Chemical mapping of a 177-nucleotide RNA with 2A3 and DMS. Values cover nucleotides 27 to 126. 2A3 adducts were read by reverse transcription with SuperScript II with manganese. The DMS profile rests on 2,034 reads.

RNA sequence: GGGAACGACUCGAGUAGAGUCGAAAAGAUAUGGACUACCCACCGCUACGGAGCGCGAAUCGGAAACGAUUCGAACUACGCUCCAGUAGCGAGGUCCUAAGUCAAAAUCUGUACUUCGGUACAGAAAGUUCUUUCCAUAGUUCGCUAUGGAAAGAACAAAAGAAACAACAACAACAAC
Reactivity to 2A3 in 0.01 (KOAc 150mM, MgCl2 10mM, bicine 150mM(pH8.5), 24C), signal-to-noise 3, nucleotides 027 to 126: g040a030u130a050u210g010g010a010c020u160a240c040c010c050a020c010c020g000c010u000a000c010g000g000a010g000c040g000c010g010a000a000u020c010g030g050a070a060a040c000g010a010u000u000c000g000a040a010c080u190a040c020g000c020u000c000c010a000g000u000a000g000c010g000a000g010g000u010c000c020u020a300a060g080u070c030a010a020a040a260u030c000u000g000u010a010c000u040u080c300g100g000u000a000c000a000g000a010a010a000
Reactivity to DMS in 0.01 (KOAc 150mM, MgCl2 10mM, bicine 150mM(pH8.5), 24C), signal-to-noise 3, nucleotides 027 to 126: g020a090u020a190u000g010g000a010c010u000a090c010c000c010a300c100c020g010c000u000a000c030g000g010a010g040c010g010c000g020a020a020u000c000g000g010a130a060a120c010g010a000u000u000c000g000a100a030c080u030a300c010g000c000u000c000c000a080g020u000a000g020c000g000a060g000g000u000c000c020u010a070a100g000u000c060a120a040a150a120u010c000u000g000u000a000c010u000u010c170g030g000u000a000c000a000g010a030a060a090